[RMDB]
An RNA of 207 nucleotides, treated with 2A3 and DMS and read out base by base. The DMS profile rests on 9,456 reads. The 2A3 profile rests on 12,562 reads. Source: RMDB library OK3TST, as collected in RNAgym. The RNA was probed in 150 mM KOAc, 10 mM MgCl2 and 150 mM bicine (pH 8.5) at 24 C. DMS adducts were read by reverse transcription with MarathonRT.
RNA sequence: GGGAACGACUCGAGUAGAGUCGAAAAAUCAACAUUGACAUUUAGGUAAUUAAGUAGCGCCCAAUGGUCAUCAUCCAGGUCGCCACAUUGUAUGCAAGGAUCAUACACUAAUCUUGCUAACCAUUCCACAACUUCAAUGUUAAAUGCCGAUAGAUCGUCGAACUAAUUUAUUCGUAAAUUAGUUCGAAAAAGAAACAACAACAACAAC
Reactivity to 2A3 in 0.01 (KOAc 150mM, MgCl2 10mM, bicine 150mM(pH8.5), 24C), signal-to-noise 9, nucleotides 027 to 156: a000u080c030a010a040c010a030u010u020g010a000c010a020u020u050u050a040g020g020u090a100a090u170u060a230a110g040u030a020g040c010g010c010c010c060a070a160u080g000g020u080c060a140u050c010a020u040c120c010a010g000g020u020c010g010c010c000a030c010a040u050u090g040u060a030u100g010c020a030a030g050g030a070u090c030a070u160a150c060a020c100u110a060a070u070c010u010u020g000c000u020a050a080c040c000a040u110u080c060c030a080c050a150a060c020u040u030c020a000a020u010g010u010u050a070a090a020u060g020c050c040g050a040u100a080g120a080u160c060g040
Reactivity to DMS in 0.01 (KOAc 150mM, MgCl2 10mM, bicine 150mM(pH8.5), 24C), signal-to-noise 4, nucleotides 027 to 156: a110u000c030a090a090c040a030u000u010g020a030c040a060u000u000u000a090g020g010u000a080a120u000u000a090a120g020u000a040g000c050g020c040c010c020a050a070u010g050g020u000c080a130u010c060a070u010c050c030a080g030g030u000c030g020c040c040a030c040a110u000u000g030u000a150u000g000c040a100a100g030g000a080u010c050a100u000a090c070a090c080u000a040a080u000c010u000u010g000c020u000a100a080c180c020a080u010u000c040c080a040c050a070a040c020u000u000c040a040a030u000g000u000u000a010a040a030u000g000c030c030g000a090u000a110g000a090u000c070g000